[RMDB]
RNA sequence: GGGAACGACUCGAGUAGAGUCGAAAACAUCGACUGCAAAGACUAAACACUCCUCAAGACCGAUAGCGAACAAGUAGCGUGAGCGAACGCUGAAAAGCACCCCACGAAGGGAGGUGCAAUAGGGCGUAACCCGACAUAUAUUCGUAUAUGUCGGGUUAAAAGAAACAACAACAACAAC
Reactivity to 2A3 in 0.01 (KOAc 150mM, MgCl2 10mM, bicine 150mM(pH8.5), 24C), signal-to-noise 4, nucleotides 027 to 126: c040a060u060c050g050a050c050u040g010c070a070a130a010g050a040c050u110a010a100a000c010a040c020u030c010c000u030c020a060a030g010a080c050c010g080a050u090a080g050c020g020a050a020c030a140a000g070u060a000g070c030g040u050g080a010g040c030g010a020a010c020g000c000u060g030a040a070a000a000g000c000a000c000c010c010c010a060c100g130a100a080g080g020g010a140g000g040u030g000c010a010a080u120a140g060g000g000c000g000u000
Reactivity to DMS in 0.01 (KOAc 150mM, MgCl2 10mM, bicine 150mM(pH8.5), 24C), signal-to-noise 4, nucleotides 027 to 126: c060a070u010c060g030a070c040u000g000c080a040a070a090g020a080c070u010a060a120a050c100a130c100u010c010c000u000c080a050a050g010a100c040c030g000a100u010a030g000c050g000a060a060c160a090a050g010u000a050g020c050g010u030g000a160g000c040g010a080a050c000g010c010u010g000a070a070a080a120g010c010a010c020c000c010c010a110c230g030a070a100g000g010g010a040g020g030u000g000c020a040a030u000a070g020g000g000c020g010u010
Structure probing data (2A3 and DMS) for a 177-nucleotide construct. Source: RMDB libraries RFM100 and RFMREP, as collected in RNAgym.